[RMDB]
RNA sequence: GGGAACGACUCGAGUAGAGUCGAAAAAGUAACCCACCAGCACGUGUAAACGCACGCAAAAGCCCUUUAUGGCAAUGUGUCUCGGCUGGUUAUGGUACACCAAUCUGACGUAUGGUUAUCAGUAAUAGAAACUUAUUCUGUUCGCAGAAUAAGUUUCAAAAGAAACAACAACAACAAC
Reactivity to DMS in 0.01 (KOAc 150mM, MgCl2 10mM, bicine 150mM(pH8.5), 24C), signal-to-noise 7, nucleotides 027 to 126: a090g000u010a100a120c010c000c120a120c010c010a020g020c010a160c010g030u000g010u000a030a050a060c080g010c150a030c010g000c050a030a030a170a200g000c000c010c270u010u010u020a110u040g000g020c010a040a280u000g000u000g000u000c010u000c030g020g020c000u000g010g010u000u010a040u000g010g000u000a010c130a040c010c010a050a300u020c060u010g030a100c170g000u020a150u000g000g000u010u000a040u000c020a050g010u020a070a090u020a100
Reactivity to 2A3 in 0.01 (KOAc 150mM, MgCl2 10mM, bicine 150mM(pH8.5), 24C), signal-to-noise 9, nucleotides 027 to 126: a000g100u080a060a120c000c000c000a010c000c000a000g020c020a020c140g020u010g010u010a010a020a010c060g040c130a020c010g000c010a020a030a030a040g010c010c000c020u190u280u180a170u300g000g000c000a010a070u030g000u000g000u000c000u000c000g000g010c000u000g000g000u000u070a020u040g010g000u020a020c030a010c130c030a050a110u080c100u140g160a060c080g130u230a090u150g030g010u020u010a020u020c010a030g050u080a030a090u060a190